[RMDB]
RNA sequence: GGGAACGACUCGAGUAGAGUCGAAAACUGGGUGGAGUGGCACCUGGUCAGUGGUGCCAGCCUCAUAUCAGUCUGGGGCAAAGCAAUUCCUUGUUUAUCCCAGCUUGGCUUUUGGUUUGUGCCGGUGAACAGUUUUUGGGUUCGCCCAAAAACUGUUAAAAGAAACAACAACAACAAC
Reactivity to DMS in 0.01 (KOAc 150mM, MgCl2 10mM, bicine 150mM(pH8.5), 24C), signal-to-noise 1, nucleotides 027 to 126: c000u010g020g000g000u000g000g000a140g010u050g000g010c000a010c000c000u000g010g000u030c140a110g000u030g000g040u060g000c000c010a010g010c000c030u030c010a030u020a120u060c130a070g000u030c050u000g030g000g000g000c060a010a080a050g000c010a030a080u110u010c070c090u000u010g000u000u040u000a250u040c000c000c000a100g000c220u000u060g040g020c130u010u010u000u040g000g000u040u050u000g030u000g020c140c020g030g000u020g030
Reactivity to 2A3 in 0.01 (KOAc 150mM, MgCl2 10mM, bicine 150mM(pH8.5), 24C), signal-to-noise 1, nucleotides 027 to 126: c010u000g000g000g000u030g000g100a050g090u080g000g000c000a000c000c000u030g000g300u140c040a050g010u040g130g020u000g010c000c000a000g000c000c000u000c040a030u080a050u190c060a020g190u030c030u010g000g000g000g000c000a030a030a030g030c040a020a030u100u020c010c000u040u080g100u010u080u080a020u000c000c000c010a000g040c010u040u080g050g000c000u000u040u100u140g120g070u050u040u080g050u030g000c010c010g000g000u040g020